[RMDB]
RNA sequence: GGGAACGACUCGAGUAGAGUCGAAAACAUCGCGUAUUCGUACGCGAUGGUAGGGCUGUAUUUCUCGCUGACUUUCAGCCCCAAACAAAAAAGUCAGCAAAAUACGCGUAUCCUUCGGGAUACGCAACAACAGUCAAGGUUUCGACCUUGACUGUUGAAAAGAAACAACAACAACAAC
Reactivity to DMS in 0.01 (KOAc 150mM, MgCl2 10mM, bicine 150mM(pH8.5), 24C), signal-to-noise 3, nucleotides 027 to 126: c010a010u010c000g020c000g030u000a000u000u010c230g000u000a000c020g010c000g000a000u000g000g000u000a110g010g020g010c010u020g000u000a060u000u000u000c040u000c120g020c000u010g000a020c010u000u000u000c010a000g020c000c000c000c140a010a010a180c070a000a000a020a010a010a000g010u000c000a000g020c010a070a050a070a080u010a060c210g030c000g010u000a000u000c000c000u000u010c230g020g000g000a010u000a000c000g010c020a020a040
Reactivity to 2A3 in 0.01 (KOAc 150mM, MgCl2 10mM, bicine 150mM(pH8.5), 24C), signal-to-noise 3, nucleotides 027 to 126: c000a000u000c000g000c000g000u000a010u030u080c240g020u040a010c000g000c000g010a000u000g000g020u060a090g000g020g000c010u000g010u020a150u030u040u020c140u070c100g010c000u010g000a000c000u010u020u020c010a010g000c000c000c020c050a010a020a010c020a010a020a000a000a010a000g010u010c010a000g000c010a010a010a000a010u080a020c060g000c000g000u000a000u000c010c000u010u060c170g050g000g000a000u000a010c000g010c000a010a010

The record gives the reactivity of an RNA of 177 nucleotides to DMS and 2A3. The RNA was probed in 150 mM KOAc, 10 mM MgCl2 and 150 mM bicine (pH 8.5) at 24 C. The data come from the RNA Mapping Database (RMDB), library M2PK50. For DMS the reverse transcriptase was MarathonRT. For DMS, 3,060 sequencing reads were counted. For 2A3 the reverse transcriptase was SuperScript II with manganese.